[RMDB]
RNA sequence: GGGAACGACUCGAGUAGAGUCGAAAAGUGGGCUAUGGGGACAUGAAGCCCAUCACUGUGGGGGGCAAGAUCGUGGGGUCCCUGUGUGCCAUUGCAGGUGUGUUAACCAUUGCUUUGCCAGUGCCAGAGUCUUGUAAUCGUUCGCGAUUACAAGACUAAAAGAAACAACAACAACAAC
Reactivity to DMS in 0.01 (KOAc 150mM, MgCl2 10mM, bicine 150mM(pH8.5), 24C), signal-to-noise 2, nucleotides 027 to 126: g020u010g020g010g000c070u000a040u000g000g010g020g000a120c040a080u000g000a060a120g030c000c000c010a060u000c100a100c100u010g020u000g000g000g030g000g000g030c060a090a070g020a070u020c060g010u000g010g000g000g000u000c020c010c020u000g000u010g010u020g010c060c070a050u030u010g010c060a060g000g000u000g000u020g020u010u010a090a060c100c040a100u000u010g010c020u020u040u010g000c000c040a070g020u020g010c060c040a090g000
Reactivity to 2A3 in 0.01 (KOAc 150mM, MgCl2 10mM, bicine 150mM(pH8.5), 24C), signal-to-noise 2, nucleotides 027 to 126: g090u050g010g010g010c000u000a010u040g000g000g000g020a030c020a060u120g110a050a000g020c000c000c000a000u090c030a010c070u130g050u180g020g030g010g000g020g020c060a010a010g030a130u160c060g060u070g040g070g010g040u010c000c010c000u010g020u020g000u030g000c020c010a020u030u130g040c040a020g020g010u030g000u020g030u140u130a050a030c020c040a060u020u060g060c000u060u060u090g030c000c060a010g010u010g070c000c000a050g000
The record gives the reactivity of an RNA of 177 nucleotides to DMS and 2A3.
For DMS the reverse transcriptase was MarathonRT.
The 2A3 profile rests on 1,994 reads.
It was measured as part of the RMDB libraries RFM100 and RFMREP.